An RNA of 177 nucleotides, treated with DMS and 2A3 and read out base by base. Values cover nucleotides 27 to 126. It was measured as part of the RMDB library OK2TST. For DMS the reverse transcriptase was MarathonRT. The DMS profile rests on 14,892 reads. The RNA was probed in 150 mM KOAc, 10 mM MgCl2 and 150 mM bicine (pH 8.5) at 24 C.
RNA sequence: GGGAACGACUCGAGUAGAGUCGAAAAGCAUUGGCGAUCAGCGAACGGCCCGGCUCGAGGAUGAUUUCCGGCAGGUCGUCGCCGAAGUCCUCCUUGAGGAAGCGGAUGAUCUCCUCCGCAUAGGUUAAGUCCGUAAAAUAUUCGUAUUUUACGGACUAAAAGAAACAACAACAACAAC
Reactivity to DMS in 0.01 (KOAc 150mM, MgCl2 10mM, bicine 150mM(pH8.5), 24C), signal-to-noise 8, nucleotides 027 to 126: g010c050a090u000u010g020g020c050g010a070u000c060a090g010c040g010a060a100c080g000g010c020c010c030g010g010c020u000c020g010a020g010g010a030u000g010a040u000u000u000c090c040g030g010c030a130g010g010u010c150g010u010c090g010c010c020g000a030a050g000u000c000c040u000c000c040u000u000g010a020g010g000a110a100g010c030g000g000a060u010g000a080u000c060u000c040c110u000c030c020g010c050a150u000a060g010g010u000u000a100
Reactivity to 2A3 in 0.01 (KOAc 150mM, MgCl2 10mM, bicine 150mM(pH8.5), 24C), signal-to-noise 5, nucleotides 027 to 126: g010c030a080u070u120g040g000c020g050a100u060c050a020g040c020g080a080a050c040g090g000c010c010c000g090g020c020u030c020g020a020g020g010a010u030g010a010u040u040u030c140c000g010g000c020a050g040g240u210c080g080u090c070g040c000c000g000a020a010g010u010c000c000u000c010c010u010u040g010a010g020g010a070a030g020c020g030g000a040u050g020a050u050c040u030c060c000u000c010c010g000c040a080u120a080g090g000u090u110a070